Structure probing data (DMS and 2A3) for a 177-nucleotide construct. The reactions ran in a buffer of 150 mM KOAc, 10 mM MgCl2 and 150 mM bicine (pH 8.5), at 24 C. 2A3 adducts were read by reverse transcription with SuperScript II with manganese.
[RMDB]
RNA sequence: GGGAACGACUCGAGUAGAGUCGAAAACCCGCCCGCAUGAAGCUGGAUUCGGUAGUAAUCGCGUGUCAGAAGCGCGCGGUGAAUACGUCCCUGCUCCUUGCACACACCGCCCGUCAAAGCACCCGAGUCACCCAUUUAUUUUCGAAUAAAUGGGUGAAAAAGAAACAACAACAACAAC
Reactivity to DMS in 0.01 (KOAc 150mM, MgCl2 10mM, bicine 150mM(pH8.5), 24C), signal-to-noise 7, nucleotides 027 to 126: c000c000c010g020c060c030c040g040c050a050u010g000a080a080g020c030u010g010g000a070u010u010c060g010g010u010a040g010u010a140a020u010c010g010c020g020u000g000u010c060a210g010a160a230g000c020g010c020g020c000g000g010u010g000a170a190u010a080c020g000u000c030c020c010u010g010c040u000c020c020u000u010g000c030a090c080a080c080a050c040c030g000c010c020c010g000u000c050a040a100a110g000c080a050c010c010c010g000a160g010
Reactivity to 2A3 in 0.01 (KOAc 150mM, MgCl2 10mM, bicine 150mM(pH8.5), 24C), signal-to-noise 9, nucleotides 027 to 126: c000c000c000g020c010c010c010g030c020a050u090g070a080a020g010c040u040g020g030a150u120u050c040g040g010u030a010g010u020a020a010u010c010g000c020g000u030g070u120c110a100g060a260a020g080c000g000c000g000c000g010g000u010g000a020a020u110a070c010g020u020c000c000c000u020g010c000u030c010c010u040u050g010c020a020c000a000c000a010c050c010g030c010c010c010g030u050c040a060a030a020g030c010a040c010c010c010g010a010g060